An RNA of 177 nucleotides, treated with 2A3 and DMS and read out base by base.
2A3 is a SHAPE reagent: it acylates the 2'-hydroxyl of flexible nucleotides of all four kinds.
Source: RMDB library 15KREP, as collected in RNAgym.
RNA sequence: GGGAACGACUCGAGUAGAGUCGAAAAGAACUCUCUCUAGAUUCCCAGAGAGAAUCGAGAGAAAACUGGCUCUCCCUUAGCCAUCCGAGUAGGACGUCUGUCCUCCUACGGAUGCCCAGGUCGGACCGUGAAUUAAUAUCUUCGGAUAUUAAUUCACAAAAGAAACAACAACAACAAC
Reactivity to 2A3 in 0.01 (KOAc 150mM, MgCl2 10mM, bicine 150mM(pH8.5), 24C), signal-to-noise 3, nucleotides 027 to 126: g040a040a040c010u000c000u000c000u000c020u070a080g010a090u030u000c000c000c140a060g050a010g000a000g000a080a000u040c030g000a000g000a010g000a030a080a010a050c050u030g030g000c010u010c000u000c060c020c000u050u070a020g020c030c010a000u000c000c000g000a000g000u010a000g000g000a000c010g130u100c230u300g000u000c010c000u020c000c000u100a170c010g000g000a000u010g000c000c010c010a030g010g020u040c020g010g020a030c020c030
Reactivity to DMS in 0.01 (KOAc 150mM, MgCl2 10mM, bicine 150mM(pH8.5), 24C), signal-to-noise 4, nucleotides 027 to 126: g010a140a180c100u000c030u000c000u000c010u010a120g000a140u000u000c020c010c050a180g010a160g010a080g000a040a020u000c020g000a030g000a030g000a050a030a120a120c120u000g000g010c020u000c030u000c030c010c030u010u010a050g010c180c020a010u010c000c000g010a050g010u000a010g000g000a010c010g010u010c230u010g000u000c000c010u000c040c000u000a130c000g010g020a010u000g010c100c080c050a090g010g020u000c050g000g010a270c120c080